Source information
Structure probing data (2A3 and DMS) for a 207-nucleotide construct. The data come from the RNA Mapping Database (RMDB), library M2RFPK. The DMS profile rests on 2,923 reads. For 2A3, 2,332 sequencing reads were counted.

RNA sequence: GGGAACGACUCGAGUAGAGUCGAAAAUUCCAUUUGAGUAUCCUGAAAACGGGUUUUUCAGCAUGGAACGUACAUAUUAAAUAGUAGGAGUGCAUAGUGGCCCGUAUAGCAGGCAUUAACAUUCCUGAAAACGUGAAAAGGUUCGCCUUUUCACGAACUCAUAUACAGCGUUCGCGCUGUAUAUGAGAAAAGAAACAACAACAACAAC
Reactivity to 2A3 in 0.01 (KOAc 150mM, MgCl2 10mM, bicine 150mM(pH8.5), 24C), signal-to-noise 3, nucleotides 027 to 156: u030u000c010c000a040u090u040u060g030a050g040u100a070u100c020c020u040g060a030a060a040a050c100g000g010g030u050u030u000u020u060c010a020g010c020a010u000g030g100a130a030c020g090u110a020c030a020u160a070u170u280a180a160a100u180a030g050u020a010g020g060a020g000u010g020c040a030u040a170g090u030g090g110c040c010c020g040u060a050u030a030g100c030a030g020g000c000a000u000u010a000a030c000a020u010u050c000c000u020g070a120a110a010a040c010g000u000g000a010a000a000a010g010g000u030u020c100g120c000c000u000u000u020u000c000a000c000g000a000a000
Reactivity to DMS in 0.01 (KOAc 150mM, MgCl2 10mM, bicine 150mM(pH8.5), 24C), signal-to-noise 2, nucleotides 027 to 156: u010u000c000c010a180u010u000u000g000a070g010u010a070u000c000c000u000g010a050a080a190a220c140g000g010g000u000u010u010u000u010c020a100g010c070a010u000g020g000a030a050c030g010u000a130c070a150u010a170u020u000a050a130a140u000a170g020u000a030g030g010a160g050u000g000c000a100u000a120g010u000g020g050c000c010c020g000u010a110u000a100g020c030a030g000g000c050a050u000u000a010a070c040a120u000u000c010c000u030g000a060a050a080a100c010g000u000g000a010a010a010a000g000g010u010u000c300g020c010c000u000u010u000u000c000a000c000g000a030a050